Chemical mapping of a 177-nucleotide RNA with 2A3 and DMS. For DMS, 9,181 sequencing reads were counted. Source: RMDB library TTRDES, as collected in RNAgym. Conditions: 150 mM KOAc, 10 mM MgCl2 and 150 mM bicine (pH 8.5), 24 C. Reactivities are given for positions 27 through 126.
RNA sequence: GGGAACGACUCGAGUAGAGUCGAAAAAAAGAUAUGGAUCAUACUUCAAAGCGCACAGAGGUAAAUUCGGAAACGAAUUUACUACCCACCUGUGAACUACGCUACGCAUUUAUGAUCCUAAGUCAAACAAUUAGGUUAAGUUCGCUUAACCUAAUUGAAAAGAAACAACAACAACAAC
Reactivity to 2A3 in 0.01 (KOAc 150mM, MgCl2 10mM, bicine 150mM(pH8.5), 24C), signal-to-noise 6, nucleotides 027 to 126: a000a010a010g020a010u020a010u050g000g000a000u000c000a000u010a030c000u020u030c100a300a300a080g000c010g000c010a000c000a010g010a000g020g000u000a010a010a000u010u000c000g000g010a010a010a000c000g000a000a000u010u000u000a000c000u020a020c030c020c010a050c000c000u020g020u010g010a030a050c120u300a040c300g000c020u110a110c160g020c050a010u030u010u000a010u020g000a000u000c010c000u000a000a000g020u000c000a110a050a050
Reactivity to DMS in 0.01 (KOAc 150mM, MgCl2 10mM, bicine 150mM(pH8.5), 24C), signal-to-noise 7, nucleotides 027 to 126: a070a080a110g000a010u000a040u010g000g000a020u000c000a020u000a010c030u000u000c040a090a150a060g020c020g000c000a010c010a020g000a120g030g000u000a000a000a000u010u000c010g010g000a020a010a040c000g000a030a000u000u000u000a000c000u000a070c040c040c080a300c040c010u000g000u000g000a060a020c080u010a300c040g010c020u000a070c290g010c150a020u000u000u000a000u010g000a010u000c000c000u010a010a090g000u000c010a130a110a200